An RNA of 177 nucleotides, treated with 2A3 and DMS and read out base by base. The data come from the RNA Mapping Database (RMDB), library OK2TRN. Conditions: 150 mM KOAc, 10 mM MgCl2 and 150 mM bicine (pH 8.5), 24 C. Reactivities are rounded to 0.1 and cut off at 0 and 3.
[RMDB]
RNA sequence: GGGAACGACUCGAGUAGAGUCGAAAAUGAAUUACCAGAAGUUGAUCUUGAAGAAAGUAAAUUCAUAGUACUUCCUGAUUGUGACGUGGCGAUCUUGAGACGGGGUCUGGAGGUUUUGGCACAACAGCAAGGCAACAAAAUUCGUUUUGUUGCCUUGAAAAGAAACAACAACAACAAC
Reactivity to 2A3 in 0.01 (KOAc 150mM, MgCl2 10mM, bicine 150mM(pH8.5), 24C), signal-to-noise 2, nucleotides 027 to 126: u020g020a000a010u060u030a000c020c060a050g100a220a040g100u140u130g060a130u100c000u050u080g050a130a070g050a150a160a010g020u050a010a190a180u020u020c000a010u040a100g090u070a150c010u040u000c000c020u090g020a180u080u210g050u050g100a060c060g020u010g050g050c040g040a040u010c000u050u060g030a030g010a050c050g070g000g010g030u000c020u030g050g020a040g030g000u000u100u160u090g040g000c070a010c000a060a020c000a020g030
Reactivity to DMS in 0.01 (KOAc 150mM, MgCl2 10mM, bicine 150mM(pH8.5), 24C), signal-to-noise 5, nucleotides 027 to 126: u010g020a050a050u010u010a080c030c060a110g000a090a100g000u010u000g000a100u010c050u000u000g000a130a080g000a120a140a120g000u000a030a050a080u000u000c050a040u000a090g000u000a070c150u010u000c010c010u000g000a090u000u010g020u010g000a070c110g010u000g010g010c060g000a050u000c030u000u000g000a090g010a060c060g020g010g010g010u000c030u010g010g000a080g020g020u000u000u020u000g000g010c060a050c060a030a050c150a080g000